The data come from the RNA Mapping Database (RMDB), library M2PK50.
Chemical mapping of a 177-nucleotide RNA with DMS and 2A3.
The 2A3 profile rests on 1,325 reads.
For DMS the reverse transcriptase was MarathonRT.
The DMS profile rests on 871 reads.

RNA sequence: GGGAACGACUCGAGUAGAGUCGAAAAGCUUUCCGUUUCGACGGAAAGCAAAGGCAAGUACAUGAGAGAUCAAAGAUCACUCAGAUAAGCCGUACUAAAGAAAAAUCAAUCUGUUCGCAGAUUGAAAACCUAGUUACACCUUCGGGUGUAACUAGGUAAAAGAAACAACAACAACAAC
Reactivity to DMS in 0.01 (KOAc 150mM, MgCl2 10mM, bicine 150mM(pH8.5), 24C), signal-to-noise 1, nucleotides 027 to 126: g010c000u000u000u000c000c000g000u000u000u010c230g020a030c000g010g000a020a020a000g000c000a010a030a080g010g010c000a060a160g000u020a030c150a160u000g000a010g000a020g060a010u020c020a110a130a190g000a010u010c010a120c000u000c000a030g000a110u030a070a200g000c010c000g000u020a140c110u010a020a100a060g000a030a030a030a060a100u000c000a040a000u000c000u000g000u000u040c110g010c000a000g000a010u010u000g000a000a010a080
Reactivity to 2A3 in 0.01 (KOAc 150mM, MgCl2 10mM, bicine 150mM(pH8.5), 24C), signal-to-noise 2, nucleotides 027 to 126: g020c000u000u000u000c000c000g010u050u060u050c160g110a010c010g000g000a000a030a000g000c030a050a000a000g030g000c090a160a070g020u090a060c100a210u080g010a010g000a000g030a010u020c160a300a220a010g060a000u050c000a030c040u000c000a000g030a110u090a090a060g000c020c050g030u010a040c040u080a050a190a050g120a000a080a060a020a010u010c000a000a010u050c020u020g060u030u080c270g000c110a000g020a030u040u000g020a000a030a000
2A3 adducts were read by reverse transcription with SuperScript II with manganese.